Notes:
An RNA of 170 nucleotides, treated with 2A3 and DMS and read out base by base. The data come from the RNA Mapping Database (RMDB), library 15KLIB. Conditions: 150 mM KOAc, 10 mM MgCl2 and 150 mM bicine (pH 8.5), 24 C. For DMS, 30,938 sequencing reads were counted.

RNA sequence: GGGAACGACUCGAGUAGAGUCGAAAAACCCGCUUUAUUCACUGGGGUCGACAGCUCUGGGGAGAGAAGGGAGGAUCGGAUGGGAAGAGUAUAUCCUAUGGGAAUCCCCGUCCUCCCGUCACGUCCAAAAUCCUAAGGUUCGCCUUAGGAAAAAGAAACAACAACAACAAC
Reactivity to 2A3 in 0.01 (KOAc 150mM, MgCl2 10mM, bicine 150mM(pH8.5), 24C), signal-to-noise 9, nucleotides 027 to 129: a000c030c010c000g000c030u150u150u080a180u080u070c080a040c080u050g010g010g000g020u060c030g070a020c020a020g010c020u010c020u040g010g010g030g010a050g020a010g010a070a050g000g010g000a000g000g010a040u090c080g030g040a060u100g040g020g010a040a040g070a040g110u060a050u020a050u160c020c020u050a070u110g070g000g020a030a050u030c010c010c000c010g000u020c000c020u000c000c000c000g000u010c010a010c030g050u030c020c000a050a010a010a050
Reactivity to DMS in 0.01 (KOAc 150mM, MgCl2 10mM, bicine 150mM(pH8.5), 24C), signal-to-noise 5, nucleotides 027 to 129: a080c020c010c010g000c160u060u060u030a090u010u000c110a100c080u030g020g010g010g020u050c060g050a080c100a130g010c000u000c040u000g020g010g000g010a010g000a070g020a030a030g000g000g020a040g000g000a040u070c130g070g030a130u060g000g000g000a070a100g040a100g000u020a040u010a080u020c020c000u020a090u080g000g040g030a030a050u030c010c010c010c020g020u020c000c000u030c010c000c030g010u040c060a050c090g040u000c050c050a060a040a050a060